[RMDB]
RNA sequence: GGGAACGACUCGAGUAGAGUCGAAAAAGCAUACCAGCGCGUACGCGAGCUGGUAUGCAAAAAUUGGUGUAGCCUUACCGUAGUAGGCACAAAAACGUCAGCUGGAUCUACGGAUCCAGCUGACGAAAAAAGUGUUUUGUGUUCGCACAAAACACAACACUUAUGUAUCGUUCGCGAUACAUAAGUGAAAAGAAACAACAACAACAAC
Reactivity to DMS in 0.01 (KOAc 150mM, MgCl2 10mM, bicine 150mM(pH8.5), 24C), signal-to-noise 1, nucleotides 027 to 156: a180g050c010a010u010a010c000c000a050g030c000g030c020g020u000a020c250g090c070g010a010g000c010u000g000g010u010a000u000g020c000a000a030a030a090a070u010u000g010g020u000g000u000a090g010c020c010u000u000a060c050c080g010u030a080g020u000a050g010g000c000a190c090a040a090a060a090a120c000g070u000c000a000g030c010u020g000g010a030u000c010u000a170c300g070g000a010u000c010c010a010g030c000u000g000a000c050g010a010a000a020a060a080a070g000u000g030u000u000u010u000g010u000g000u010u020c280g040c060a040c000a000a000a000a000c000a000c000a070a140
Reactivity to 2A3 in 0.01 (KOAc 150mM, MgCl2 10mM, bicine 150mM(pH8.5), 24C), signal-to-noise 2, nucleotides 027 to 156: a000g010c000a000u010a000c000c000a000g010c030g000c010g020u050a050c230g020c040g090a010g010c000u000g000g000u000a000u000g010c000a040a000a000a000a070u110u140g020g000u090g090u210a010g000c000c010u000u000a000c010c030g030u010a010g000u000a000g010g030c010a000c050a040a070a020a010a010c010g010u000c000a000g000c020u000g000g000a000u000c000u020a040c250g100g010a000u000c000c000a000g000c010u000g000a000c040g000a000a000a000a000a000a000g000u010g000u000u000u000u000g010u000g020u030u060c150g030c080a000c000a000a000a000a000c000a000c000a000a000